This 177-nucleotide RNA was probed chemically with 2A3 and DMS. The 2A3 profile rests on 1,811 reads. The data come from the RNA Mapping Database (RMDB), library 15KREP. The reactions ran in a buffer of 150 mM KOAc, 10 mM MgCl2 and 150 mM bicine (pH 8.5), at 24 C.
[RMDB]
RNA sequence: GGGAACGACUCGAGUAGAGUCGAAAAUUCGAUCCGGACCGGCUCAUCUCGGCAAAGGGCGGCAGUCCUCAGUACUCUUACUCUUUCCUAUAAAGAGGAGACUGCUGGACUCGCCGCCCAAGCCCGACUUUAUGGGAAGGUUCGCCUUCCCAUAAAGAAAAGAAACAACAACAACAAC
Reactivity to 2A3 in 0.01 (KOAc 150mM, MgCl2 10mM, bicine 150mM(pH8.5), 24C), signal-to-noise 2, nucleotides 027 to 126: u000u010c010g040a030u070c010c010g010g020a020c000c010g000g000c000u000c010a100u040c050u020c040g010g000c020a060a070a090g030g000g000c020g000g000c010a000g000u030c000c000u010c010a020g010u100a300c010u010c010u070u150a190c000u020c010u030u200u050c040c070u210a160u190a300a030a000g010a000g000g010a000g000a000c000u010g050c080u010g000g000a000c000u010c020g010c000c010g030c000c000c000a000a000g000c000c000c000g030a010
Reactivity to DMS in 0.01 (KOAc 150mM, MgCl2 10mM, bicine 150mM(pH8.5), 24C), signal-to-noise 2, nucleotides 027 to 126: u000u000c050g010a080u000c050c000g000g000a030c120c060g000g010c010u000c050a160u000c050u000c020g010g010c050a050a150a150g000g010g000c000g020g000c040a010g000u000c000c010u010c000a020g000u000a120c050u020c030u000u000a300c020u000c030u000u000u000c260c180u000a130u020a010a010a010g030a020g000g000a040g000a040c020u000g000c240u000g010g000a020c010u000c150g030c010c010g000c000c000c000a010a020g000c000c030c030g010a150